[RMDB]
RNA sequence: GGGAACGACUCGAGUAGAGUCGAAAAUGCAUUUCAUCCACAGAGACAUCUGGAAAAGGAGGCAGAGCAGAGCCUGACUUUUGAUUAUUUGGGGAGGGAGCCUGGAGCUGGUGAAAGUGAGGGCAUACCUCCCUAAGGGGUUCGCCCCUUAGGGAGGAAAAGAAACAACAACAACAAC
Reactivity to DMS in 0.01 (KOAc 150mM, MgCl2 10mM, bicine 150mM(pH8.5), 24C), signal-to-noise 2, nucleotides 027 to 126: u000g000c070a040u000u000u010c080a100u000c050c050a080c050a040g020a080g000a160c270a070u010c030u000g000g000a030a050a100a140g000g000a060g020g000c000a030g000a140g020c040a070g010a110g030c020c000u010g020a110c020u000u010u000u020g010a090u000u010a110u010u000u000g010g000g000g000a080g000g010g020a120g010c020c020u000g010g020a210g010c040u000g000g000u010g020a040a090a030g020u010g010a300g000g000g020c040a060u000a130